[RMDB]
Notes: Source: RMDB library RNAMAK, as collected in RNAgym. This 207-nucleotide RNA was probed chemically with DMS and 2A3. For DMS the reverse transcriptase was MarathonRT.
RNA sequence: GGGAACGACUCGAGUAGAGUCGAAAACGCUGGGAAGUCGAGCUCCGGGAGGCACUGAAGCGCGCACGGUGCCGAAGAACGCGAGCUAAGACAGCUUCCUGUGCUGAAGCGCGCACGGCAACCGAAAGGUGCGAGGACUACCCUUUCGAGGGUAGAAUAUACCAGCAAGUUUCGACUUGCUGGUAUAAAAAGAAACAACAACAACAAC
Reactivity to DMS in 0.01 (KOAc 150mM, MgCl2 10mM, bicine 150mM(pH8.5), 24C), signal-to-noise 2, nucleotides 027 to 156: c060g030c010u000g020g000g010a040a030g010u020c060g000a060g020c020u020c030c010g030g000g000a300g010g000c040a060c010u000g000a040a070g060c000g000c000g000c000a300c000g010g000u010g020c010c000g040a120a130g000a090a190c060g010c090g030a010g030c000u020a090a090g030a130c190a070g000c010u000u000c010c000u000g010u000g030c000u000g000a080a080g030c020g000c000g050c000a300c040g000g020c030a120a180c040c040g000a080a080a220g010g030u010g000c030g020a130g020g010a190c000u000a010c000c000c000u010u000u000c300g030a080g000g000g020u000a010g000a090a200
Reactivity to 2A3 in 0.01 (KOAc 150mM, MgCl2 10mM, bicine 150mM(pH8.5), 24C), signal-to-noise 3, nucleotides 027 to 156: c010g030c020u070g000g040g010a000a040g060u170c120g050a030g040c000u000c000c000g010g020g000a020g000g000c000a000c000u010g030a210a070g030c000g000c000g010c000a020c010g000g010u010g000c000c010g000a050a010g010a000a000c050g070c240g020a000g000c010u020a070a030g180a120c060a100g030c000u000u000c000c000u010g010u010g010c000u050g020a160a040g000c010g010c000g000c010a000c020g010g000c020a040a030c020c000g060a100a010a050g000g030u010g010c010g030a060g050g050a030c010u020a000c000c010c000u040u070u100c290g110a030g000g010g010u000a000g000a020a010
The reactions ran in a buffer of 150 mM KOAc, 10 mM MgCl2 and 150 mM bicine (pH 8.5), at 24 C.